The data come from the RNA Mapping Database (RMDB), library 15KREP. The record gives the reactivity of an RNA of 177 nucleotides to 2A3 and DMS. For DMS, 9,138 sequencing reads were counted. Reactivities are given for positions 27 through 126. The reactions ran in a buffer of 150 mM KOAc, 10 mM MgCl2 and 150 mM bicine (pH 8.5), at 24 C. 2A3 adducts were read by reverse transcription with SuperScript II with manganese.
[RMDB]
RNA sequence: GGGAACGACUCGAGUAGAGUCGAAAAGGGCAUUGAAACGGCUGUUGGCCAUUAUGUUCAUGCUCGCCUGAAGGGUGGUCUUAUUUUAAAGUUUGACUCUGGCACCGUUAGCAAGACUUCAGACUGGCUAAAGCCAUUAGUUCGCUAAUGGCUUUAGAAAAGAAACAACAACAACAAC
Reactivity to 2A3 in 0.01 (KOAc 150mM, MgCl2 10mM, bicine 150mM(pH8.5), 24C), signal-to-noise 3, nucleotides 027 to 126: g010g000g000c030a030u080u150g040a060a060a040c050g020g020c020u070g170u300u120g100g000c000c010a020u090u110a180u240g040u000u010c010a000u030g000c010u010c010g000c000c000u020g050a070a020g050g020g000u060g010g010u030c030u080u060a160u110u130u040u090a110a170a040g020u040u020u050g010a020c000u000c050u070g020g020c040a020c040c050g080u030u040a020g000c010a000a060g010a030c000u040u000c040a060g010a120c050u070g030g000
Reactivity to DMS in 0.01 (KOAc 150mM, MgCl2 10mM, bicine 150mM(pH8.5), 24C), signal-to-noise 6, nucleotides 027 to 126: g010g000g010c010a020u000u010g010a030a040a080c150g010g010c010u000g030u010u010g010g020c010c010a140u010u010a080u010g010u000u000c010a020u000g010c010u000c020g010c030c010u000g010a080a070g000g010g020u000g000g000u010c040u010u000a070u000u000u000u010a050a110a100g000u000u000u010g010a050c300u010c030u000g000g010c020a080c130c080g010u010u010a050g010c050a050a070g000a070c070u000u000c030a050g000a070c040u000g000g010